[RMDB]
RNA sequence: GGGAACGACUCGAGUAGAGUCGAAAAAAGCUGUCGUCCAGUACGUUUCCGGUGAUCAAGGACGUAAGCCGGAGGAGCAAAGGUGAUUAGAGACCCCUGUAGUUCCGGCCGUAAACUAUGCCAACUGGCCACAUAAGAAGUUCGCUUCUUAUGUGGCAAAAGAAACAACAACAACAAC
Reactivity to DMS in 0.01 (KOAc 150mM, MgCl2 10mM, bicine 150mM(pH8.5), 24C), signal-to-noise 2, nucleotides 027 to 126: a090a080g010c040u000g020u010c040g010u020c010c030a150g000u000a080c120g010u000u000u000c010c000g020g010u000g010a120u000c070a120a050g020g010a000c050g020u010a040a170g040c010c020g000g000a200g000g010a160g010c000a070a140a070g000g000u000g000a150u000u010a070g010a300g010a150c080c020c020c000u000g010u000a170g000u000u000c030c000g010g000c000c010g000u000a060a060a050c150u000a060u010g000c010c030a100a100c160u000g010
Reactivity to 2A3 in 0.01 (KOAc 150mM, MgCl2 10mM, bicine 150mM(pH8.5), 24C), signal-to-noise 1, nucleotides 027 to 126: a000a000g080c040u050g040u080c000g000u000c000c000a000g040u050a010c010g000u000u060u000c040c010g000g090u080g030a080u130c050a100a080g060g000a020c040g030u030a000a040g030c000c000g000g000a000g000g060a080g000c020a120a040a020g010g020u090g030a100u090u180a060g100a030g050a260c010c010c010c000u050g050u090a070g020u060u030c040c000g010g000c010c000g000u020a010a020a010c050u060a020u190g010c030c000a000a040c110u090g120